[RMDB]
RNA sequence: GGGAACGACUCGAGUAGAGUCGAAAAGAUAUGGAUGCCCAUGCACCGGUGAAGUCGGAAACGAUGGAGGUGGUGGAGCAUCCUAAGUCAAAACUCUCUCAUUUGGCUUCGGCCAAAUGAGAGAGAAGAAGGGAAGAGUGUUCGCACUCUUCCCUUCAAAAGAAACAACAACAACAAC
Reactivity to 2A3 in 0.01 (KOAc 150mM, MgCl2 10mM, bicine 150mM(pH8.5), 24C), signal-to-noise 1, nucleotides 027 to 126: g040a020u040a040u220g010g010a000u020g000c010c040c030a020u250g250c000a010c010c040g300g300u050g070a040a000g000u000c000g030g000a080a080a010c000g010a010u010g020g020a020g010g020u000g040g000u010g040g030a220g030c020a000u000c000c000u000a030a000g020u040c020a060a090a000a240c000u000c000u020c000u000c000a000u020u000u000g000g000c000u160u050c300g130g060c040c000a010a010a010u000g000a000g010a000g000a000g000a000a000
Reactivity to DMS in 0.01 (KOAc 150mM, MgCl2 10mM, bicine 150mM(pH8.5), 24C), signal-to-noise 1, nucleotides 027 to 126: g000a040u000a300u000g000g000a010u000g010c010c000c000a050u000g000c000a000c000c010g050g000u010g050a220a190g000u000c000g000g000a110a080a200c000g000a000u000g000g020a070g000g040u000g010g000u000g000g010a100g030c000a010u000c000c000u000a010a040g000u000c040a070a050a170a100c000u000c000u000c000u000c000a020u000u010u000g000g030c000u000u000c190g020g000c020c020a000a000a010u000g000a010g000a000g000a010g000a000a020